[RMDB]
RNA sequence: GGGAACGACUCGAGUAGAGUCGAAAAGGCAUCGGGGUACACAAUUGGGUGCAGUGAUGUCCGGUUGAAGACUUGGUGGUGCGUGGUAUAGAGAUAAUGGUCAAAAAUGGGACAGGUUCACGCUGAGGAGGAAGAUACGGUUCGCCGUAUCUUCCUCAAAAGAAACAACAACAACAAC
Reactivity to 2A3 in 0.01 (KOAc 150mM, MgCl2 10mM, bicine 150mM(pH8.5), 24C), signal-to-noise 1, nucleotides 027 to 126: g010g080c000a000u060c040g000g000g000g000u050a000c130a000c140a000a300u280u170g160g070g000u060g070c060a000g080u010g000a080u000g050u000c000c000g000g010u000u000g000a000a000g090a050c040u000u010g040g000u060g000g000u130g050c120g090u080g000g150u230a300u040a050g170a000g000a090u090a170a110u010g100g000u040c020a080a120a080a080a080u240g000g050g000a000c000a000g030g050u100u110c040a100c060g010c110u080g020a000g300
Reactivity to DMS in 0.01 (KOAc 150mM, MgCl2 10mM, bicine 150mM(pH8.5), 24C), signal-to-noise 2, nucleotides 027 to 126: g020g000c020a010u000c030g000g000g010g060u010a050c070a080c030a110a170u050u030g040g000g020u030g010c020a070g000u000g000a030u020g000u000c000c020g000g000u020u000g000a090a110g000a140c130u040u010g000g050u020g000g000u000g010c120g020u000g000g030u010a060u060a120g010a160g010a160u030a040a150u000g000g000u000c080a080a030a020a050a130u010g000g000g000a070c040a040g000g020u000u000c010a000c020g010c020u010g020a170g030